This 177-nucleotide RNA was probed chemically with DMS and 2A3. The DMS profile rests on 3,239 reads. The RNA was probed in 150 mM KOAc, 10 mM MgCl2 and 150 mM bicine (pH 8.5) at 24 C. It was measured as part of the RMDB library OK2TRN. Reactivities are given for positions 27 through 126. For 2A3, 924 sequencing reads were counted.

[RMDB]
RNA sequence: GGGAACGACUCGAGUAGAGUCGAAAAAGUUGUCAAACCAGUAUUUUCUUCGGAAGAGUAUGGCGAGACUUGAGCAGCCGUUUUUAAUCAUCUGUCGUUAGAUGGUGGUGCACUCGGUGCAUUUACGUCCUCAUGAAUGGUUCGCCAUUCAUGAGGAAAAAGAAACAACAACAACAAC
Reactivity to DMS in 0.01 (KOAc 150mM, MgCl2 10mM, bicine 150mM(pH8.5), 24C), signal-to-noise 3, nucleotides 027 to 126: a100g020u010u000g020u000c030a040a190a160c020c010a030g010u020a120u000u000u000u000c010u000u000c160g040g000a020a020g010a030g000u000a110u000g010g000c000g000a300g010a020c020u010u000g010a090g030c090a110g030c000c030g010u000u000u000u000u000a060a020u000c010a000u000c000u000g000u010c130g000u000u020a030g000a030u010g000g010u000g000g030u000g010c040a020c010u000c180g020g030u000g000c020a030u000u000u000a060c140g000
Reactivity to 2A3 in 0.01 (KOAc 150mM, MgCl2 10mM, bicine 150mM(pH8.5), 24C), signal-to-noise 1, nucleotides 027 to 126: a000g070u060u040g030u010c020a040a050a040c000c000a020g050u070a070u000u050u000u000c000u070u070c090g040g040a040a040g010a040g040u300a040u020g000g010c000g020a030g010a000c000u040u110g090a080g040c090a060g040c020c010g040u020u050u000u020u250a040a000u050c010a000u000c000u030g040u080c060g110u100u040a000g000a000u010g020g040u010g010g000u020g030c030a000c020u260c070g170g020u000g000c020a020u000u050u070a070c080g050